[RMDB]
RNA sequence: GGGAACGACUCGAGUAGAGUCGAAAAAAAAGAUAUGGAGCACUUGUCAGCACAAUACAGAGGAUGAUCGGAAACGAUCAUCUACCCACCUGUAUGGGUGCUUGGAUUUAGUGCUCCUAAGUCAAAACCUUAAUGAUCUCUUCGGAGAUCAUUAAGGAAAAGAAACAACAACAACAAC
Reactivity to 2A3 in 0.01 (KOAc 150mM, MgCl2 10mM, bicine 150mM(pH8.5), 24C), signal-to-noise 1, nucleotides 027 to 126: a000a000a000a070g030a040u090a060u090g010g000a000g010c000a010c000u010u000g000u030c030a050g000c020a010c000a000a020u030a000c000a010g010a000g020g030a000u020g000a010u000c000g020g020a020a020a000c000g020a000u010c000a000u070c000u020a030c030c010c000a050c030c020u020g080u030a000u040g300g300g000u040g000c080u070u130g030g000a040u300u290u220a000g000u000g000c000u010c000c010u000a000a000g020u000c020a030a060a110a210
Reactivity to DMS in 0.01 (KOAc 150mM, MgCl2 10mM, bicine 150mM(pH8.5), 24C), signal-to-noise 2, nucleotides 027 to 126: a080a070a070a040g020a050u000a300u000g000g010a010g010c020a000c000u000u000g000u020c000a060g010c000a000c000a140a020u000a000c000a000g020a130g030g000a010u000g010a020u000c010g030g010a090a080a150c000g030a020u000c000a000u000c010u000a040c010c050c070a300c150c000u020g000u020a010u000g010g030g000u000g000c000u040u000g070g000a010u020u000u000a020g020u000g000c010u000c010c000u000a000a040g020u010c010a140a160a070a160